[RMDB]
Notes:
An RNA of 177 nucleotides, treated with 2A3 and DMS and read out base by base. The RNA was probed in 150 mM KOAc, 10 mM MgCl2 and 150 mM bicine (pH 8.5) at 24 C. The 2A3 profile rests on 2,222 reads. For DMS, 1,329 sequencing reads were counted. It was measured as part of the RMDB library OK2TRN.

RNA sequence: GGGAACGACUCGAGUAGAGUCGAAAAACUCAAACAAAAUCAAGGACAAUGUGGUGGAUCCAGAUUGUGACUUUAAUCUGUGCAAGACCAACUUCAUCAAUACAAAAUGGAUUAGAGACAAAAACACCUACUGUUGACAAUUCGUUGUCAACAGUAGAAAAGAAACAACAACAACAAC
Reactivity to 2A3 in 0.01 (KOAc 150mM, MgCl2 10mM, bicine 150mM(pH8.5), 24C), signal-to-noise 3, nucleotides 027 to 126: a000c030u040c020a110a070a050c070a040a170a030a090u150c090a070a080g060g000a020c040a030a060u090g030u030g170g050u080g140g100a040u050c020c010a030g010a070u010u020g050u060g060a020c010u080u060u050a060a020u050c020u030g080u060g040c050a050a020g020a100c000c040a070a060c000u150u060c030a110u050c030a130a020u080a250c100a070a170a020a090u060g020g000a000u000u030a020g000a000g010a050c070a010a100a010a000a010c050a040c010
Reactivity to DMS in 0.01 (KOAc 150mM, MgCl2 10mM, bicine 150mM(pH8.5), 24C), signal-to-noise 2, nucleotides 027 to 126: a030c020u000c010a090a120a170c210a040a030a080a040u010c090a070a080g010g010a110c060a040a040u010g000u000g000g000u000g000g040a180u000c020c000a040g010a060u010u010g040u000g000a100c040u000u020u010a100a040u010c030u000g000u010g000c160a060a070g020a140c050c040a040a080c120u000u000c080a030u010c040a080a120u020a080c160a020a070a090a060u000g000g000a000u000u020a050g000a020g000a170c070a000a050a040a060a030c180a040c170